[RMDB]
RNA sequence: GGGAACGACUCGAGUAGAGUCGAAAAUUACCCGCGGGCUGCACGAAGUCGCCGACCGGGUAUGGGCGUGGACGCUGCCCGACGGGGGAUACGGCUUCAGCAACGCCGGGCUGGUCGCCGGGGACGGCGCUGGAUGGACAUUCGUGUCCAUCCAGCGAAAAGAAACAACAACAACAAC
Reactivity to 2A3 in 0.01 (KOAc 150mM, MgCl2 10mM, bicine 150mM(pH8.5), 24C), signal-to-noise 2, nucleotides 027 to 126: u090u020a110c010c000c000g000c010g010g000g000c030u050g000c050a030c150g070a120a050g080u030c040g050c110c010g030a130c040c050g110g000g100u140a130u260g110g020g000c050g050u090g110g030a040c090g000c040u050g000c000c000c000g020a080c020g000g000g000g050g020a010u030a200c020g000g040c010u070u010c010a030g010c020a050a030c050g020c080c000g000g020g040c030u060g010g050u110c050g020c030c040g000g000g060g000a040c040g050g050
Reactivity to DMS in 0.01 (KOAc 150mM, MgCl2 10mM, bicine 150mM(pH8.5), 24C), signal-to-noise 3, nucleotides 027 to 126: u010u000a140c010c000c000g030c050g000g010g020c010u000g030c000a070c110g010a160a170g010u000c020g020c010c000g010a130c060c050g000g020g000u010a070u010g020g000g020c010g020u010g000g000a160c080g000c030u000g000c000c000c000g010a090c020g000g010g010g020g010a080u000a130c060g010g000c000u000u010c030a060g020c070a060a080c110g010c040c010g020g000g020c030u020g000g020u010c060g020c020c010g000g020g000g010a130c100g010g020